[RMDB]
RNA sequence: GGGAACGACUCGAGUAGAGUCGAAAAAUCAGUGGGCUUAGCCCAGACUUAUGAGAGAGUUAUGACCUCUCAGCCCCUCCACCUUGGGGUGCCCUAUUCGGAGCACUGCAGUUCCCGAUAGAAAGGCGAUACUACCAUCCUUCGGGAUGGUAGUAUCAAAAGAAACAACAACAACAAC
Reactivity to 2A3 in 0.01 (KOAc 150mM, MgCl2 10mM, bicine 150mM(pH8.5), 24C), signal-to-noise 2, nucleotides 027 to 126: a020u140c040a030g120u070g000g010g010c100u230u190a070g000c050c030c030a010g030a030c040u080u080a030u130g000a000g010a010g000a000g000u000u120a110u190g090a100c000c010u010c000u020c010a020g040c000c000c010c000u050c020c010a080c010c020u040u090g060g000g040g010u020g040c020c010c000u050a210u070u130c040g010g030a110g050c010a010c050u150g050c030a010g010u010u000c000c000c020g000a050u070a130g100a000a060a000g050g000c050
Reactivity to DMS in 0.01 (KOAc 150mM, MgCl2 10mM, bicine 150mM(pH8.5), 24C), signal-to-noise 2, nucleotides 027 to 126: a090u010c080a130g030u000g000g010g000c000u000u000a100g020c000c010c010a040g000a110c110u010u010a090u000g010a050g010a000g000a040g010u000u010a110u010g010a180c130c000u000c000u000c000a030g020c010c000c000c000u000c020c040a080c150c060u020u010g000g000g000g000u010g000c000c020c000u000a160u000u000c140g020g010a100g010c020a020c020u000g000c080a090g000u000u000c010c000c000g000a210u010a070g010a020a100a100g000g040c210